Structure probing data (DMS and 2A3) for a 177-nucleotide construct. The RNA was probed in 150 mM KOAc, 10 mM MgCl2 and 150 mM bicine (pH 8.5) at 24 C. It was measured as part of the RMDB library OK2TRN. For DMS the reverse transcriptase was MarathonRT. 2A3 adducts were read by reverse transcription with SuperScript II with manganese. The 2A3 profile rests on 2,524 reads.
[RMDB]
RNA sequence: GGGAACGACUCGAGUAGAGUCGAAAAACACAGUAUGCAAAAGCGGGUAGGGGAUGUGCAGAUGUGUAUAAAAGCCCUGUAAGGUGGUAACCUGAAGUCUUCUAACAAGGUCCUUUCAUCAGGAAAAGAAGAGGAAUGAUUUCGAUCAUUCCUCUUCAAAAGAAACAACAACAACAAC
Reactivity to DMS in 0.01 (KOAc 150mM, MgCl2 10mM, bicine 150mM(pH8.5), 24C), signal-to-noise 5, nucleotides 027 to 126: a020c040a060c050a060g000u010a130u000g020c040a070a060a140a130g000c130g010g000g010u000a060g010g000g010g010a070u010g000u000g010c030a030g000a120u000g010u010g020u000a070u000a050a080a130a160g000c030c020c010u000g000u020a090a050g010g020u000g000g010u000a050a060c030c030u000g000a060a130g000u000c040u000u000c050u010a050a080c130a060a080g010g000u000c040c020u000u000u010c120a050u000c100a040g000g000a060a060a090a140
Reactivity to 2A3 in 0.01 (KOAc 150mM, MgCl2 10mM, bicine 150mM(pH8.5), 24C), signal-to-noise 2, nucleotides 027 to 126: a010c020a000c020a030g160u180a040u070g000c030a010a040a080a070g090c090g050g030g040u060a080g030g050g000g030a040u070g030u030g070c000a000g020a060u060g040u000g000u010a020u050a180a110a030a010g060c000c030c000u030g090u080a010a050g010g050u060g000g070u060a030a050c010c010u010g000a020a010g050u000c020u070u040c000u060a030a030c060a070a020g120g030u050c010c010u020u100u010c040a130u030c020a020g090g000a050a150a010a010